[RMDB]
The data come from the RNA Mapping Database (RMDB), library TTRDES. Chemical mapping of a 177-nucleotide RNA with DMS and 2A3.
RNA sequence: GGGAACGACUCGAGUAGAGUCGAAAAGAUAUGGAAACAUACAGCUUUUGACGCUCUCACAUCGGAAACGAUGUGUAGAGCGAUAAGCUGGUGUUUCCUAAGUCAAAGAGAGAGCUUCGGCUCUCUCGAUCGAACCUCAGUUCGCUGAGGUUCGAUCAAAAGAAACAACAACAACAAC
Reactivity to DMS in 0.01 (KOAc 150mM, MgCl2 10mM, bicine 150mM(pH8.5), 24C), signal-to-noise 1, nucleotides 027 to 126: g000a040u000a290u000g010g000a010a020a000c000a000u000a150c030a000g000c000u010u000u000u000g010a240c070g000c000u000c010u000c010a000c000a010u000c000g020g010a110a070a160c000g010a010u000g010u000g010u000a000g030a000g010c000g010a030u000a000a000g020c000u000g000g030u000g010u000u000u000c000c000u000a000a060g000u000c020a080a130a170g010a010g000a020g010a020g010c000u000u000c230g020g020c000u000c000u010c000u000c000
Reactivity to 2A3 in 0.01 (KOAc 150mM, MgCl2 10mM, bicine 150mM(pH8.5), 24C), signal-to-noise 2, nucleotides 027 to 126: g010a010u040a020u140g000g020a040a000a000c010a010u300a300c000a120g000c040u050u160u300u300g300a240c150g000c020u000c000u000c000a020c000a010u000c000g030g070a050a030a030c020g000a020u000g010u000g000u050a000g000a010g000c000g000a020u010a000a000g000c000u010g030g010u010g000u000u000u000c000c010u020a040a010g030u000c060a030a300a010g010a000g000a000g010a000g000c020u080u120c300g200g000c030u000c000u000c000u000c000

2A3 adducts were read by reverse transcription with SuperScript II with manganese.